[RMDB]
RNA sequence: GGGAACGACUCGAGUAGAGUCGAAAAGCCGCAAUGGAUGGUGCGACUUUACCACCUUGUUCGCUCCGCCUGGGUCUUGCAGGCUCCAAAAGAGUCCCUGCGCGGCUUCUGGAAGAAGCACUCUGGCUCGUCAGUAUCAGUUCGCUGAUACUGACGAAAAAGAAACAACAACAACAAC
Reactivity to 2A3 in 0.01 (KOAc 150mM, MgCl2 10mM, bicine 150mM(pH8.5), 24C), signal-to-noise 1, nucleotides 027 to 126: g000c000c010g000c060a060a120u270g060g040a180u100g050g070u060g030c020g030a060c040u070u060u090a050c030c050a080c050c000u020u100g050u090u060c030g000c000u000c000c010g020c010c020u020g040g000g000u020c070u070u060g000c000a000g030g010c030u000c010c020a090a080a010a070g020a000g060u080c090c010c000u010g000c000g010c020g000g070c030u050u030c030u060g050g020a150a080g020a030a000g060c020a020c060u000c030u030g050g000c010
Reactivity to DMS in 0.01 (KOAc 150mM, MgCl2 10mM, bicine 150mM(pH8.5), 24C), signal-to-noise 3, nucleotides 027 to 126: g010c010c030g010c030a090a110u000g010g010a080u010g010g030u000g000c020g010a010c070u010u000u000a120c040c040a170c140c040u000u000g020u020u010c040g010c060u000c030c020g000c020c000u010g020g000g020u010c100u020u010g010c030a040g000g000c020u000c010c010a090a060a170a300g000a040g000u000c120c020c020u000g000c070g000c270g020g020c010u000u000c050u000g030g010a120a060g000a020a020g030c020a100c100u000c020u010g000g010c170
An RNA of 177 nucleotides, treated with 2A3 and DMS and read out base by base. It was measured as part of the RMDB library OK2TRN. For 2A3 the reverse transcriptase was SuperScript II with manganese. DMS adducts were read by reverse transcription with MarathonRT.